[RMDB]
RNA sequence: GGGAACGACUCGAGUAGAGUCGAAAAUUAACCGGUUAAUUGGAACCAACCUUCCUUGGUUAACCAACCAACCUUCCGGUUCCAAUUCCUUCCAAGGCCGGUUAAGGCCGGUUAACCUUAAUUAACCAACCCCUAAAAUCUUCGGAUUUUAGGGGUUAAAAGAAACAACAACAACAAC
Reactivity to DMS in 0.01 (KOAc 150mM, MgCl2 10mM, bicine 150mM(pH8.5), 24C), signal-to-noise 1, nucleotides 027 to 126: u010u000a050a010c000c000g010g000u010u000a080a050u020u030g030g000a030a010c000c000a110a170c190c100u010u030c040c020u010u000g000g000u000u010a100a090c300c260a100a040c020c020a010a040c120c060u000u010c170c140g000g000u000u010c010c010a010a050u000u000c240c090u010u000c090c140a120a190g000g000c010c010g000g010u020u000a010a000g010g010c060c060g000g010u000u000a030a040c000c000u010u020a040a090u000u000a010a000c020c030